An RNA of 177 nucleotides, treated with DMS and read out base by base.
In probing experiments dimethyl sulfate is read out at A N1 and C N3, which are open when not base-paired.
For DMS the reverse transcriptase was MarathonRT.
Conditions: 150 mM KOAc, 10 mM MgCl2 and 150 mM bicine (pH 8.5), 24 C.
[RMDB]
RNA sequence: GGGAACGACUCGAGUAGAGUCGAAAAUAGUGGUUACCUCUCAGCCCCUCCACCUUGGAGUGCCCUAUUCGGAGCACUGCAGUUCCCGAUAGAAAGGCUAAGCACCUCGCAAUGACGUAAGGUGGGAUCAUAUCGUUCCCUUCGGGGAACGAUAUGAAAAAGAAACAACAACAACAAC
Reactivity to DMS in 0.01 (KOAc 150mM, MgCl2 10mM, bicine 150mM(pH8.5), 24C), signal-to-noise 1, nucleotides 027 to 126: u000a100g030u000g020g010u000u000a150c080c040u010c000u000c050a080g000c020c010c000c040u000c030c020a050c070c100u020u000g010g000a040g020u000g000c010c000c030u010a110u010u000c190g000g000a080g000c010a020c040u010g010c040a060g010u000u000c010c000c000g040a240u000a170g010a040a050a050g000g000c070u000a120a170g010c050a060c050c000u000c080g010c060a030a090u010g010a100c140g000u010a030a040g000g020u000g040g000g020a150